[RMDB]
RNA sequence: GGGAACGACUCGAGUAGAGUCGAAAAUCUGUAAAGUUUGAUACAAAGUUUGCAUGCCCUCCCACAACUCUCUCAGUUCAUCCACGGCAAGUCCAUCCAAGUUGUCUCGGUAUUUCUUGGGUUUGGAUGUUUCCUGCUGUAGGGUAUGAGGCGGUUGCAUAAGUUGUUUUUUCGAAAACAACUUAUGAAAAGAAACAACAACAACAAC
Reactivity to DMS in 0.01 (KOAc 150mM, MgCl2 10mM, bicine 150mM(pH8.5), 24C), signal-to-noise 3, nucleotides 027 to 156: u000c030u000g030u000a030a070a130g010u000u000u000g020a260u010a160c070a060a080a130g020u000u000u000g020c030a090u000g010c000c020c010u010c030c010c020a160c050a030a040c010u000c070u000c030u000c020a090g000u000u000c090a090u000c000c010a060c010g030g010c020a040a090g000u000c300c010a030u010c010c010a030a100g000u010u010g000u000c040u000c100g040g020u000a070u000u000u010c010u000u010g010g010g010u000u000u000g030g020a060u000g000u000u000u000c040c050u000g020c010u000g000u000a080g040g020g010u000a070u000g000a040g000g020c150g010g010u000u000g020
Reactivity to 2A3 in 0.01 (KOAc 150mM, MgCl2 10mM, bicine 150mM(pH8.5), 24C), signal-to-noise 4, nucleotides 027 to 156: u030c020u010g030u050a020a030a080g070u040u060u070g190a160u230a130c080a040a070a080g050u030u030u050g030c030a040u250g010c000c030c030u000c020c020c010a020c010a010a010c000u070c010u000c000u000c040a030g020u160u120c040a030u000c040c000a010c010g000g000c020a030a050g010u000c000c000a010u000c000c000a000a030g030u090u040g120u070c070u070c220g140g010u140a100u050u140u020c020u020u030g020g000g040u010u060u110g000g000a010u000g020u030u100u030c020c050u020g000c000u010g020u050a140g030g000g000u020a050u030g000a000g040g020c050g020g000u000u000g010

Source information: Structure probing data (DMS and 2A3) for a 207-nucleotide construct. For 2A3 the reverse transcriptase was SuperScript II with manganese. It was measured as part of the RMDB library OK3TST. Conditions: 150 mM KOAc, 10 mM MgCl2 and 150 mM bicine (pH 8.5), 24 C. For DMS the reverse transcriptase was MarathonRT. For 2A3, 2,621 sequencing reads were counted. The DMS profile rests on 8,908 reads.